Conditions: 150 mM KOAc, 10 mM MgCl2 and 150 mM bicine (pH 8.5), 24 C. Chemical mapping of a 177-nucleotide RNA with 2A3. The data come from the RNA Mapping Database (RMDB), library RFM100. For 2A3 the reverse transcriptase was SuperScript II with manganese.
[RMDB]
RNA sequence: GGGAACGACUCGAGUAGAGUCGAAAAGACCUCUCUGUGCUUAGGGCAAACACUCAUUUGGCCUUAAAUGGGAUCCUGUGAGAGGGGGUCCCUCCAUUGGCAGCUGGACUGUUCUUUGGGGCCUUAUUAACGUCAGGACGUUCGCGUCCUGACGUUAAAAAGAAACAACAACAACAAC
Reactivity to 2A3 in 0.01 (KOAc 150mM, MgCl2 10mM, bicine 150mM(pH8.5), 24C), signal-to-noise 2, nucleotides 027 to 126: g030a000c000c000u000c000u000c020u090g050u090g040c030u090u210a080g070g030g030c000a060a200a130c150a020c100u060c030a200u140u100u190g040g000c000c030u060u070a000a080a080u020g000g030g020a010u010c000c000u060g060u200g040a000g000a060g060g000g040g060g010u000c040c000c000u010c010c010a010u000u020g000g000c000a040g010c070u220g040g000a290c000u010g010u220u300c000u170u000u000g000g000g020g000c070c000u000u030a030u000